[RMDB]
Description
Chemical mapping of a 207-nucleotide RNA with DMS and 2A3. DMS adducts were read by reverse transcription with MarathonRT. The 2A3 profile rests on 2,478 reads. 2A3 adducts were read by reverse transcription with SuperScript II with manganese. 2A3 is a SHAPE reagent: it acylates the 2'-hydroxyl of flexible nucleotides of all four kinds. The data come from the RNA Mapping Database (RMDB), library OK3TST.
RNA sequence: GGGAACGACUCGAGUAGAGUCGAAAAACACGUACACUCACUCGAACACGAUCGUACGUACGUGAGUGUGUUCACGAGAUCGAGAACGUGAGAGAUCGAACACGAGAUCACUCGUUCGUACGAACUCGUACGAGAUCGUGAGAACGUGAACGUGAUCUCAUCGCCCUAGGUUCGCCUAGGGCGAUGAAAAAGAAACAACAACAACAAC
Reactivity to DMS in 0.01 (KOAc 150mM, MgCl2 10mM, bicine 150mM(pH8.5), 24C), signal-to-noise 2, nucleotides 027 to 156: a100c040a040c030g010u000a080c040a040c060u010c000a010c020u010c010g020a180a190c090a030c010g020a060u000c040g040u030a160c160g010u010a040c080g000u010g000a070g040u000g010u000g000u000u000c020a200c080g000a040g000a110u010c060g030a130g020a200a180c030g000u040g000a190g000a090g000a120u000c060g050a120a220c050a080c110g000a200g050a300u000c000a110c000u000c090g020u000u010c040g020u010a100c020g000a060a100c070u000c000g020u000a010c000g000a090g000a100u010c010g010u000g030a040g000a120a060c010g000u000g010a030a130c080g020u000g000a100u000c020
Reactivity to 2A3 in 0.01 (KOAc 150mM, MgCl2 10mM, bicine 150mM(pH8.5), 24C), signal-to-noise 4, nucleotides 027 to 156: a000c000a010c010g030u090a030c030a020c060u010c000a020c000u010c000g030a100a010c020a000c030g020a020u060c030g060u200a150c080g040u060a010c030g060u080g010a080g030u100g010u000g010u080u040c070a040c140g040a040g000a090u170c100g010a000g010a100a020c000g010u040g010a060g000a010g010a050u110c050g030a080a040c030a020c070g050a060g030a140u050c010a020c030u040c050g050u040u020c000g020u040a020c010g010a180a100c080u070c170g010u010a010c050g000a000g010a040u090c080g000u000g000a020g010a040a010c010g000u010g020a000a000c020g020u050g060a080u000c030